[RMDB]
RNA sequence: GGGAACGACUCGAGUAGAGUCGAAAAGGCGUAGCCGACAACAUGCCCAGGUAGCCCAGACCUUCGAGGCUACGGUGCGUUGCGACGCACGGUCUGAUUCUUCACAACGACGUUCACCGCGUCUUCUACAACCGGCAAAGAUUCGUCUUUGCCGGAAACAAACCUAAUCCUUCGGGAUUAGGUUUGUAAAAGAAACAACAACAACAAC
Reactivity to DMS in 0.01 (KOAc 150mM, MgCl2 10mM, bicine 150mM(pH8.5), 24C), signal-to-noise 1, nucleotides 027 to 156: g050g000c030g060u010a190g050c040c040g020a260c150a130a080c050a090u020g020c000c020c020a090g050g000u000a050g010c020c010c130a110g050a080c060c050u020u030c050g020a300g030g000c000u000a010c020g010g050u000g060c020g050u010u000g000c100g000a240c000g000c000a040c050g020g030u010c050u000g040a170u010u010c060u000u000c090a170c100a070a190c000g020a090c010g020u010u010c100a050c040c090g000c050g020u000c090u000u020c060u020a090c090a140a230c000c000g000g020c000a000a000a010g020a060u000u000c220g000u000c000u000u020u000g000c020c020g000g000a000a010
Reactivity to 2A3 in 0.01 (KOAc 150mM, MgCl2 10mM, bicine 150mM(pH8.5), 24C), signal-to-noise 2, nucleotides 027 to 156: g020g000c120g100u140a030g030c010c000g080a040c070a120a060c010a060u110g020c010c000c010a050g010g020u020a020g000c070c040c180a030g000a030c000c010u020u020c000g000a000g000g010c000u000a000c000g000g020u020g000c010g000u050u100g070c170g080a000c000g010c000a000c020g000g000u000c010u020g050a070u160u110c080u140u070c060a080c040a260a080c110g040a000c010g070u220u190c060a110c110c000g000c000g020u030c050u000u020c010u070a090c020a080a080c000c000g000g000c000a000a000a000g010a000u060u090c130g000u000c070u010u000u010g020c000c000g010g000a000a000